[RMDB]
Chemical mapping of a 177-nucleotide RNA with 2A3 and DMS. Reactivities are rounded to 0.1 and cut off at 0 and 3.

RNA sequence: GGGAACGACUCGAGUAGAGUCGAAAAGGUUGCGGGGGGACAACCAGCGUCCGCCAACCACCAGUCGUAACUGUUCGCCGGCGCGGAACAAUGUCGCCGACGGGCCAAGCGCGACAUCGACGGCGACGGUAAUGAAGGUGUUCGCACCUUCAUUACCAAAAGAAACAACAACAACAAC
Reactivity to 2A3 in 0.01 (KOAc 150mM, MgCl2 10mM, bicine 150mM(pH8.5), 24C), signal-to-noise 2, nucleotides 027 to 126: g020g000u030u020g020c050g020g030g000g000g010g000a000c010a030a020c020c010a030g070c040g160u030c050c020g030c060c000a030a040c040c010a020c010c020a010g030u020c020g030u030a110a030c040u040g040u070u040c020g000c020c000g030g000c050g000c050g070g030a090a060c080a110a140u140g080u140c010g000c020c010g010a050c030g010g000g000c020c020a100a020g050c040g000c000g070a010c020a060u100c030g050a040c020g010g000c010g000a040c050
Reactivity to DMS in 0.01 (KOAc 150mM, MgCl2 10mM, bicine 150mM(pH8.5), 24C), signal-to-noise 6, nucleotides 027 to 126: g020g010u010u000g030c080g020g020g020g010g000g000a200c040a050a060c060c070a130g010c110g020u000c020c030g000c050c040a070a100c050c030a190c050c080a090g010u010c060g020u000a040a180c100u000g000u000u000c020g010c020c020g010g010c020g020c200g000g000a090a080c290a100a070u010g000u010c000g010c000c020g020a070c070g000g000g000c060c090a090a080g010c300g010c030g000a030c030a050u000c040g010a080c010g000g000c010g010a020c170